The record gives the reactivity of an RNA of 177 nucleotides to DMS and 2A3.
The RNA was probed in 150 mM KOAc, 10 mM MgCl2 and 150 mM bicine (pH 8.5) at 24 C.
High 2A3 reactivity points to a flexible backbone, as in loops and unpaired stretches.
[RMDB]
RNA sequence: GGGAACGACUCGAGUAGAGUCGAAAAACGUUCAGCACGAACGUCUCCAUCCAUGCCAUCGCCCACGACGACCAGACCUACUCCAUGGACGUCGUCUGGUUGAGGUUCGACGUGCCGACCUCGUGUGAUAUCCUAUACCGUUCGCGGUAUAGGAUAUAAAAGAAACAACAACAACAAC
Reactivity to DMS in 0.01 (KOAc 150mM, MgCl2 10mM, bicine 150mM(pH8.5), 24C), signal-to-noise 9, nucleotides 027 to 126: a070c040g010u000u000c070a170g010c110a070c120g000a080a030c060g000u000c030u010c030c030a100u000c050c060a060u000g000c020c030a070u000c080g010c050c010c200a070c050g000a080c080g000a050c020c020a060g000a080c040c050u000a070c100u000c040c100a140u010g010g010a070c060g000u000c220g000u000c030u000g010g010u000u010g000a050g010g000u000u000c060g010a110c070g010u000g010c030c050g010a050c020c020u000c030g010u000g010u000g000
Reactivity to 2A3 in 0.01 (KOAc 150mM, MgCl2 10mM, bicine 150mM(pH8.5), 24C), signal-to-noise 6, nucleotides 027 to 126: a000c030g010u040u030c040a040g060c090a020c090g010a060a010c020g030u010c020u000c010c000a070u020c020c010a050u130g050c030c010a130u060c050g030c020c020c010a030c040g030a010c010g010a010c010c020a020g020a060c010c020u070a080c050u040c060c030a110u150g060g020a040c030g020u040c020g000u010c030u040g030g000u010u140g030a020g010g030u060u110c040g050a050c040g040u070g020c020c010g030a030c020c010u030c020g010u080g030u060g130